Source: RMDB library RNAMAK, as collected in RNAgym. This 207-nucleotide RNA was probed chemically with 2A3 and DMS. The 2A3 profile rests on 7,817 reads. Values cover nucleotides 27 to 156. DMS adducts were read by reverse transcription with MarathonRT.
RNA sequence: GGGAACGACUCGAGUAGAGUCGAAAACCAAGGACGUUUCGACGUCCUUGGAAAAAACCUUUGUGGUACGUCAGCGAGGAUCUACCUUUCCCAUUGGGAAACGUAGGGAGCUGUGUACCACUCUGGUAAAAAAGAUCAUGACUUCGGUCAUGAUCAAGUAUCAUGUCAACUUCGGUUGACAUGAUACAAAAGAAACAACAACAACAAC
Reactivity to 2A3 in 0.01 (KOAc 150mM, MgCl2 10mM, bicine 150mM(pH8.5), 24C), signal-to-noise 6, nucleotides 027 to 156: c000c000a010a010g010g000a000c040g010u080u120u240c300g110a030c000g010u040c000c000u000u000g000g010a050a000a000a020a010a020c010c010u020u010u010g000u000g010g000u010a020c020g110u070c130a000g000c000g040a270g050g020a020u010c000u000a000c000c030u000u000u010c030c010c100a300u260u300g000g000g000a000a010a010c020g000u000a000g000g000g010a000g000c000u000g000u010g000u000a000c000c000a000c000u000c000u000g000g010u110a130a080a010a010a000a000g000a000u000c000a000u000g000a010c020u030u110c300g100g000u010c010a000u000g000a000u010c000a000a000
Reactivity to DMS in 0.01 (KOAc 150mM, MgCl2 10mM, bicine 150mM(pH8.5), 24C), signal-to-noise 2, nucleotides 027 to 156: c010c000a040a010g000g000a020c010g040u000u000u000c280g010a100c030g020u010c010c000u000u000g030g020a000a030a080a090a090a020c000c000u000u000u000g020u000g010g020u000a020c020g020u010c030a020g020c030g020a100g040g000a050u000c000u010a000c020c010u000u000u000c000c010c010a300u000u030g050g020g010a000a010a000c040g010u000a000g000g010g010a100g040c030u000g070u000g020u000a010c010c000a020c020u000c040u010g010g020u010a000a040a060a110a120a070g010a020u000c010a000u000g000a030c010u000u020c300g040g030u000c010a010u000g000a000u000c000a000a070